An RNA of 177 nucleotides, treated with DMS and read out base by base. It was measured as part of the RMDB library TTRDES.

RNA sequence: GGGAACGACUCGAGUAGAGUCGAAAAAAAAAGAUAUGGAGAGAGCCCAACAAGAGGCGAGACGAUGGUACAUCGGAAACGAUGUACACGUCUCGAACUACCUUGGGCUCUCUCCUAAGUCAAAAAACAUUAUCCUCUUCUUCGGAAGAGGAUAAUGAAAAGAAACAACAACAACAAC
Reactivity to DMS in 0.01 (KOAc 150mM, MgCl2 10mM, bicine 150mM(pH8.5), 24C), signal-to-noise 2, nucleotides 027 to 126: a030a080a110a130a090g000a020u000a300u000g000g000a030g000a040g000a010g000c000c000c000a000a000c180a090a080g010a060g000g000c000g030a000g010a010c000g020a090u010g020g020u000a010c000a010u000c000g010g000a120a070a170c000g000a000u000g040u010a000c000a050c000g000u000c000u000c000g000a090a050c000u010a080c120c210u000u000g000g000g010c000u010c020u000c000u000c000c000u000a010a050g000u000c040a000a070a090a100a070a090